This 207-nucleotide RNA was probed chemically with 2A3 and DMS. Conditions: 150 mM KOAc, 10 mM MgCl2 and 150 mM bicine (pH 8.5), 24 C. For 2A3, 1,018 sequencing reads were counted. For DMS, 2,274 sequencing reads were counted.
RNA sequence: GGGAACGACUCGAGUAGAGUCGAAAAGAUGAAUCUGAUCGUGUCUCUAUAGUAAGAUCUGAAAUUAGUUAUGAUGAAAUAGUAAAAUUAAUGUGCCUUAAGUACAAAGAUAAUAUGACGACAUGCCAGAGUGUUAGCGCUAAUAUUACUGAAAUGACUGUGAUUCUUUUUUCGAAAAGAAUCACAGAAAAGAAACAACAACAACAAC
Reactivity to 2A3 in 0.01 (KOAc 150mM, MgCl2 10mM, bicine 150mM(pH8.5), 24C), signal-to-noise 2, nucleotides 027 to 156: g040a030u070g070a050a090u020c020u070g020a040u030c020g000u030g060u040c010u000c030u060a100u090a150g040u080a080a000g000a080u000c010u070g070a140a090a130u070u050a070g040u070u080a040u050g050a040u000g010a060a030a120u070a050g060u110a040a060a080a150u120u120a060a050u090g030u050g060c020c050u070u090a160a040g010u000a040c040a030a110a000g000a000u100a120a030u090a070u100g080a050c070g010a000c040a010u040g020c060c010a040g020a000g070u040g020u050u110a010g000c000g010c030u000a000a040u080a050u120u080a040c030u030g060a060a050a130u030g030a000
Reactivity to DMS in 0.01 (KOAc 150mM, MgCl2 10mM, bicine 150mM(pH8.5), 24C), signal-to-noise 2, nucleotides 027 to 156: g030a100u000g000a100a150u000c040u000g000a110u000c060g000u000g020u010c010u000c020u000a110u000a170g000u010a070a120g010a110u000c050u000g040a100a110a140u010u000a080g010u000u010a140u010g020a160u000g010a070a070a150u000a060g030u010a060a060a040a090u000u010a020a200u040g000u000g000c010c030u010u000a050a170g030u000a040c040a040a130a300g010a080u000a020a110u000a010u020g000a040c030g000a060c030a040u000g000c060c090a070g020a210g020u000g000u000u010a060g020c110g040c040u010a060a060u000a040u000u010a080c060u000g010a040a090a050u010g000a260